[RMDB]
RNA sequence: GGGAACGACUCGAGUAGAGUCGAAAAAGACUUGUGAUAAGCAUGACAAUCUCUAGUAGUAGAAGCUUUUGAUAAACCAGAAUGAGUGAACCACAUAAACCCAAGCCAUCUCUUCGCAGUUAAUCCACCAGCGUAUGGUAAAUCACUUUCGCCUACAUAAAUACAAUGUGUUCGCACAUUGUAUUUAAAAAGAAACAACAACAACAAC
Reactivity to 2A3 in 0.01 (KOAc 150mM, MgCl2 10mM, bicine 150mM(pH8.5), 24C), signal-to-noise 8, nucleotides 027 to 156: a000g060a030c030u040u030g010u030g050a070u090a110a030g020c030a040u080g030a050c030a050a100u020c020u000c010u060a040g030u020a010g010u030a020g060a150a020g030c030u080u100u070u100g080a070u080a090a090a050c030c020a020g060a110a080u070g010a060g050u040g040a040a020c020c010a020c020a080u110a060a060a040c010c010c010a020a010g000c000c010a040u020c030u000c000u070u060c040g000c020a020g020u040u080a040a050u030c030c030a030c010c020a030g020c020g050u070a020u070g010g000u020a040a090a060u090c030a030c040u050u090u070c050g030c020c010u050a070c050a080
Reactivity to DMS in 0.01 (KOAc 150mM, MgCl2 10mM, bicine 150mM(pH8.5), 24C), signal-to-noise 5, nucleotides 027 to 156: a090g020a090c040u010u000g030u000g030a110u000a060a120g020c020a080u000g010a130c050a070a100u000c030u000c030u000a110g010u000a090g010u000a080g020a090a130g010c020u000u010u000u000g010a100u000a050a080a120c040c020a110g020a080a070u000g000a080g010u000g000a070a060c040c020a050c070a100u000a060a060a090c030c000c010a050a140g010c050c020a080u000c020u000c040u000u010c050g010c040a090g010u000u000a050a090u010c030c020a060c040c020a080g020c080g030u000a060u010g020g000u000a040a060a080u000c060a040c060u000u000u000c060g020c040c020u010a060c060a220